An RNA of 177 nucleotides, treated with DMS and 2A3 and read out base by base. Reactivities are given for positions 27 through 126. DMS adducts were read by reverse transcription with MarathonRT. The data come from the RNA Mapping Database (RMDB), libraries RFM100 and RFMREP.
[RMDB]
RNA sequence: GGGAACGACUCGAGUAGAGUCGAAAAAGCGAAGCCGGCUUGCCGGUGGAGUGAUGCUUUCAGAGUGGCUAGUGCACCAGACGGUAACCGAUGCACUGCCGAGUAGCGAAAGUCGUUCCUUUUGGAACUUCGCCACAUUAUUCGUAAUGUGGCGAAGAAAAGAAACAACAACAACAAC
Reactivity to DMS in 0.01 (KOAc 150mM, MgCl2 10mM, bicine 150mM(pH8.5), 24C), signal-to-noise 3, nucleotides 027 to 126: a080g000c020g010a230a250g020c030c020g000g000c010u010u010g000c030c010g000g000u000g030g000a300g010u040g040a090u010g000c050u010u030u000c040a200g030a030g000u040g010g000c000u090a000g000u000g020c000a000c060c050a140g030a210c210g000g000u040a070a150c090c010g000a160u000g000c030a000c020u000g010c010c010g000a130g010u000a110g020c020g000a150a150a000g010u030c000g010u000u000c000c010u000u000u000u030g020g070a190a220
Reactivity to 2A3 in 0.01 (KOAc 150mM, MgCl2 10mM, bicine 150mM(pH8.5), 24C), signal-to-noise 4, nucleotides 027 to 126: a000g050c020g030a030a000g000c000c000g060g010c100u100u120g090c000c020g000g000u010g000g000a020g030u110g030a120u240g020c030u060u050u050c060a060g070a090g120u250g060g030c080u200a010g000u020g020c010a050c060c050a070g080a160c050g100g090u070a090a020c080c020g000a030u030g000c000a000c020u000g000c000c000g020a030g020u080a010g030c020g030a030a020a000g020u010c000g000u000u010c040c000u000u030u070u070g030g040a030a020
The reactions ran in a buffer of 150 mM KOAc, 10 mM MgCl2 and 150 mM bicine (pH 8.5), at 24 C. As a SHAPE reagent, 2A3 marks flexible, mostly unpaired nucleotides at the ribose 2'-OH.